[RMDB]
RNA sequence: GGGAACGACUCGAGUAGAGUCGAAAAGCGUAAGCAAAAAUGUGAUCUUGCUUGUAAAUACAAUUUUGAGAGGUUAAUGAAUUACAAGUAGUGCUAUUUUUGUCCCUCUCUGCAAUAGACAGCCAAAAAUCAGUAGUAUGUUCGCAUACUACUGAUUAAAAGAAACAACAACAACAAC
Reactivity to DMS in 0.01 (KOAc 150mM, MgCl2 10mM, bicine 150mM(pH8.5), 24C), signal-to-noise 9, nucleotides 027 to 126: g010c090g020u030a060a130g010c020a010a030a020a030a030u020g010u000g010a110u020c060u020u010g010c010u010u000g000u000a010a020a060u030a080c100a090a070u020u010u010u010g000a030g010a030g000g000u020u030a070a070u010g010a130a060u010u000a020c030a030a040g020u010a050g020u010g010c040u000a010u000u010u000u000u000g000u000c090c000c000u000c020u000c000u000g000c110a070a090u020a070g010a070c140a070g000c060c100a020a070a050
Reactivity to 2A3 in 0.01 (KOAc 150mM, MgCl2 10mM, bicine 150mM(pH8.5), 24C), signal-to-noise 9, nucleotides 027 to 126: g050c050g080u140a050a020g010c040a040a010a000a000a010u250g110u080g260a300u070c050u050u060g000c000u010u000g000u010a010a040a020u230a070c100a090a120u030u060u090u100g060a060g000a020g020g040u090u170a070a040u170g120a060a090u060u020a020c010a020a010g020u040a020g090u040g080c010u010a030u020u020u000u020u020g030u030c020c000c000u000c000u000c010u010g000c000a010a020u040a040g090a080c030a020g100c040c040a080a150a040
The record gives the reactivity of an RNA of 177 nucleotides to DMS and 2A3. 2A3 adducts were read by reverse transcription with SuperScript II with manganese. For DMS the reverse transcriptase was MarathonRT.